[RMDB]
RNA sequence: GGGAACGACUCGAGUAGAGUCGAAAAGAUAUGGAAGAGCUUUUGACGCUGCUAAGUCGGAAACGACUUAGACAGCGAUAAGCUCAUUUCCUAAGUCAAAACCGCUCGUGGUUCGCCACGAGCGGAAGAAUAAGGAAUACUUCGGUAUUCCUUAUUCAAAAGAAACAACAACAACAAC
Reactivity to 2A3 in 0.01 (KOAc 150mM, MgCl2 10mM, bicine 150mM(pH8.5), 24C), signal-to-noise 4, nucleotides 027 to 126: g000a010u050a020u080g000g010a010a020g000a020g010c030u000u070u150u160g250a200c220g000c000u010g000c000u000a000a000g000u000c000g000g020a060a020a030c000g000a010c000u000u010a000g020a020c020a000g000c020g010a000u010a000a000g000c010u000c010a010u030u030u000c000c000u000a080a010g040u000c020a010a010a130a200c000c020g000c010u020c010g000u010g050g080u090u120c300g050c090c000a000c030g030a010g020c020g010g000a000a010
Reactivity to DMS in 0.01 (KOAc 150mM, MgCl2 10mM, bicine 150mM(pH8.5), 24C), signal-to-noise 4, nucleotides 027 to 126: g000a020u000a190u010g000g000a040a040g000a010g000c000u000u000u010u010g010a170c080g010c000u000g010c000u000a000a010g010u000c000g010g010a070a050a100c010g020a020c000u000u000a000g000a100c000a000g010c010g020a020u000a010a010g010c000u000c010a070u000u000u000c000c000u000a030a160g010u010c030a100a070a130a180c000c000g020c010u000c000g000u000g000g000u000u010c220g010c000c000a010c000g000a000g000c000g010g000a000a010
The record gives the reactivity of an RNA of 177 nucleotides to 2A3 and DMS. 2A3 adducts were read by reverse transcription with SuperScript II with manganese. Reactivities are given for positions 27 through 126. The data come from the RNA Mapping Database (RMDB), library TTRDEL. Conditions: 150 mM KOAc, 10 mM MgCl2 and 150 mM bicine (pH 8.5), 24 C.